Description: Structure probing data (DMS and 2A3) for a 207-nucleotide construct. For 2A3, 3,158 sequencing reads were counted. The RNA was probed in 150 mM KOAc, 10 mM MgCl2 and 150 mM bicine (pH 8.5) at 24 C. For DMS, 1,476 sequencing reads were counted. As a SHAPE reagent, 2A3 marks flexible, mostly unpaired nucleotides at the ribose 2'-OH. DMS adducts were read by reverse transcription with MarathonRT.
RNA sequence: GGGAACGACUCGAGUAGAGUCGAAAACCUGUUAUCUGACCAAUAACAGAAUGCACCACAGCGUAAAAUCAUCUGAUUGGGUGAGUUGGUCGCACCGCCAUUUGACGAACGAACGCCAAGCCAAAGCACUACGAGUAUGUGUUCGCACAUACUCGAACCUUCGUAUCCGUUUCGACGGAUACGAAGGAAAAGAAACAACAACAACAAC
Reactivity to DMS in 0.01 (KOAc 150mM, MgCl2 10mM, bicine 150mM(pH8.5), 24C), signal-to-noise 1, nucleotides 027 to 156: c140c030u010g000u000u010a000u000c010u010g030a110c070c030a300a070u000a010a010c000a040g030a120a150u000g030c050a130c010c020a030c130a140g000c080g070u000a030a010a050a060u000c030a040u000c020u000g010a100u000u000g000g000g000u000g000a300g020u020u020g010g010u000c030g020c030a040c040c000g000c060c030a220u000u000u000g010a020c030g040a080a090c140g030a040a070c060g040c010c030a020a280g000c150c080a020a120a070g010c040a110c020u000a160c000g000a080g030u010a000u010g040u010g020u010u000c300g000c010a030c020a020u020a050c000u000c000g020a060a030
Reactivity to 2A3 in 0.01 (KOAc 150mM, MgCl2 10mM, bicine 150mM(pH8.5), 24C), signal-to-noise 4, nucleotides 027 to 156: c000c000u000g000u020u010a000u000c020u020g010a020c000c010a010a020u000a010a000c010a010g060a080a130u150g050c090a070c050c020a050c020a040g040c020g060u110a040a080a050a050u080c020a020u000c010u120g070a170u080u210g120g010g000u030g030a030g010u020u010g010g010u000c020g040c020a010c000c020g040c020c000a060u070u030u110g050a030c050g040a140a020c050g010a030a020c020g050c010c010a060a010g010c020c020a070a030a010g080c040a100c120u160a060c020g000a000g010u000a000u000g000u000g000u000u050c100g040c050a010c000a000u000a000c000u000c000g000a000a000